[RMDB]
RNA sequence: GGGAACGACUCGAGUAGAGUCGAAAAUCCAGAGUGUGGGCACUCAAGCCCAUAAGUGCUCCAGCCUGGGAUAGUUUAUGUUUUUGAUCAGUUUCCACCUCCCCUUACCUCCUCAUCUCAGUUGCCAGUAUGCUCUGUUUUUCGAAACAGAGCAUACAAAAGAAACAACAACAACAAC
Reactivity to 2A3 in 0.01 (KOAc 150mM, MgCl2 10mM, bicine 150mM(pH8.5), 24C), signal-to-noise 1, nucleotides 027 to 126: u000c000c000a020g000a140g010u130g020u050g010g000g020c030a030c020u080c030a040a050g070c030c010c000a040u070a010a010g020u040g000c030u010c040c040a090g040c020c030u090g000g040g060a100u060a050g060u000u130u100a170u200g150u050u020u040u070u100g090a060u140c080a050g030u020u040u060c050c010a050c000c050u060c070c040c020c000u000u000a030c000c000u010c000c030u010c020a070u000c010u010c010a020g020u040u040g070c050c030a020
Reactivity to DMS in 0.01 (KOAc 150mM, MgCl2 10mM, bicine 150mM(pH8.5), 24C), signal-to-noise 3, nucleotides 027 to 126: u000c000c000a050g000a120g020u010g020u010g020g010g010c010a040c070u000c160a120a150g000c030c030c040a070u000a030a040g000u010g000c030u000c010c030a150g010c070c020u000g020g010g000a080u010a080g010u010u000u010a080u020g020u000u000u010u010u000g010a090u000c070a110g010u010u000u000c010c010a160c040c010u000c000c020c000c050u000u000a090c060c020u000c020c010u000c040a060u010c030u000c040a070g000u010u010g010c040c050a100